Chemical mapping of a 177-nucleotide RNA with DMS.
[RMDB]
RNA sequence: GGGAACGACUCGAGUAGAGUCGAAAAGGCGUACCCUGGCUGUCGGCAUUGUAGAGCUCGAUCUUAUGCCCGUCGACGCCGCCGGCAUCGUUGAUUUCCUUCACGGCGAGCUCCGCGCCAUGCAUCGGUGCCUCGUUUUAUUCGUAAAACGAGGCACAAAAGAAACAACAACAACAAC
Reactivity to DMS in 0.01 (KOAc 150mM, MgCl2 10mM, bicine 150mM(pH8.5), 24C), signal-to-noise 1, nucleotides 027 to 126: g000g020c000g100u000a040c140c050c060u020g000g000c000u000g000u010c040g030g000c060a070u020u030g000u030a090g010a090g000c110u000c040g000a050u030c140u000u010a040u000g000c020c100c090g000u030c060g000a080c020g070c000c000g000c040c160g030g030c030a070u000c050g000u000u000g000a060u030u040u000c010c040u020u030c080a080c110g010g010c070g030a040g000c020u010c030c030g020c050g000c000c000a080u030g000c130a080u000c100g000
Annotation
The reactions ran in a buffer of 150 mM KOAc, 10 mM MgCl2 and 150 mM bicine (pH 8.5), at 24 C.